[RMDB]
RNA sequence: GGGAACGACUCGAGUAGAGUCGAAAAUGACGUCGCAGCGCAUCGCGCAGCAGCUCGGAGCGGCCGAUGUGUAGGCGACGCGCCCACGCGUCGGCCAGGUCGACGUCGUGGUCGUCGGCGCGGAAGCCUAGCUACGGGGCUUCGGCCCCGUAGCUAGAAAAGAAACAACAACAACAAC
Reactivity to DMS in 0.01 (KOAc 150mM, MgCl2 10mM, bicine 150mM(pH8.5), 24C), signal-to-noise 1, nucleotides 027 to 126: u000g030a140c010g000u010c020g000c030a150g010c010g020c000a010u000c030g000c220g050c010a060g000c000a080g010c120u000c110g030g010a160g030c040g010g010c010c000g020a010u000g010u010g000u010a090g010g000c010g000a020c040g020c010g030c130c000c000a060c010g000c010g020u000c010g000g020c010c150a060g030g030u010c040g000a050c050g000u010c060g010u000g010g020u000c040g010u000c030g010g010c000g010c000g010g000a130a110g000c160